[RMDB]
RNA sequence: GGGAACGACUCGAGUAGAGUCGAAAAAGGUUUGCCAAGCCCACAUUGAAGAUUCCGGCGUUUGCACCGCCGACAUUGUUGCCGCCGACGUUUGCCAACCCGAAGUUAAGGGUCAUGGUGCCCACGCCCCCCAUUUAAUCUUCGGAUUAAAUGGGGGAAAAGAAACAACAACAACAAC
Reactivity to DMS in 0.01 (KOAc 150mM, MgCl2 10mM, bicine 150mM(pH8.5), 24C), signal-to-noise 2, nucleotides 027 to 126: a060g010g000u010u010u010g000c030c050a110a120g010c010c000c030a020c110a060u020u020g030a180a080g010a150u020u010c090c030g000g010c090g020u010u020u020g000c080a030c210c030g000c000c030g010a050c080a050u000u000g010u000u010g010c050c090g000c020c000g010a030c070g000u000u000u000g010c020c030a070a080c030c000c010g020a080a080g020u020u020a100a140g040g010g010u020c070a070u010g010g000u010g000c000c000c020a090c140g010c100
Reactivity to 2A3 in 0.01 (KOAc 150mM, MgCl2 10mM, bicine 150mM(pH8.5), 24C), signal-to-noise 5, nucleotides 027 to 126: a000g100g000u070u030u070g020c010c010a020a040g030c010c020c000a070c020a070u100u210g130a120a040g050a160u140u010c070c000g010g010c020g050u050u080u040g040c040a010c000c000g000c000c000g010a000c010a020u050u130g060u080u060g000c020c030g000c000c000g000a030c030g040u030u070u090g010c010c000a030a050c020c000c000g030a030a030g050u160u170a110a120g030g010g000u010c030a050u120g020g000u050g000c000c000c000a010c020g120c010
This 177-nucleotide RNA was probed chemically with DMS and 2A3. The 2A3 profile rests on 2,762 reads. 2A3 adducts were read by reverse transcription with SuperScript II with manganese. DMS adducts were read by reverse transcription with MarathonRT.